[RMDB]
RNA sequence: GGGAACGACUCGAGUAGAGUCGAAAAGGAGGCGGCGACGCCCCCCCCGACUUGAGAUUGGCGAAAGCCAAUCUGUCGCCUCCGCGCCUCAUUCUCGAUGAUGCCACUUGAAGGCGGCCCGCAGGGGCUACUAUCCGCAUUUCGAUGCGGAUAGUAGAAAAGAAACAACAACAACAAC
Reactivity to DMS in 0.01 (KOAc 150mM, MgCl2 10mM, bicine 150mM(pH8.5), 24C), signal-to-noise 6, nucleotides 027 to 126: g010g010a010g010g010c000g020g000c020g010a120c190g010c020c010c000c010c000c010c010c020g010a110c150u030u020g000a030g000a010u000u000g010g000c000g010a120a100a170g000c000c000a000a000u000c000u000g010u010c000g010c010c000u000c010c010g010c070g000c020c000u000c060a110u010u000c020u010c050g010a090u020g000a140u010g000c020c010a090c070u020u010g010a100a080g000g000c020g010g010c010c010c010g010c140a100g010g000g000g010
Reactivity to 2A3 in 0.01 (KOAc 150mM, MgCl2 10mM, bicine 150mM(pH8.5), 24C), signal-to-noise 9, nucleotides 027 to 126: g020g000a000g000g000c020g010g010c040g030a070c080g110c020c000c000c000c000c000c000c010g100a140c090u120u210g110a020g000a040u000u000g000g000c020g060a100a030a000g000c000c000a000a000u000c000u000g000u000c000g000c000c000u000c010c000g000c010g000c010c000u040c020a130u140u030c060u020c070g150a150u130g030a060u130g090c040c010a080c050u040u080g060a070a030g030g000c000g000g010c000c000c000g040c070a070g000g020g000g000
An RNA of 177 nucleotides, treated with DMS and 2A3 and read out base by base. For 2A3 the reverse transcriptase was SuperScript II with manganese. For DMS the reverse transcriptase was MarathonRT. The 2A3 profile rests on 17,121 reads. High 2A3 reactivity points to a flexible backbone, as in loops and unpaired stretches.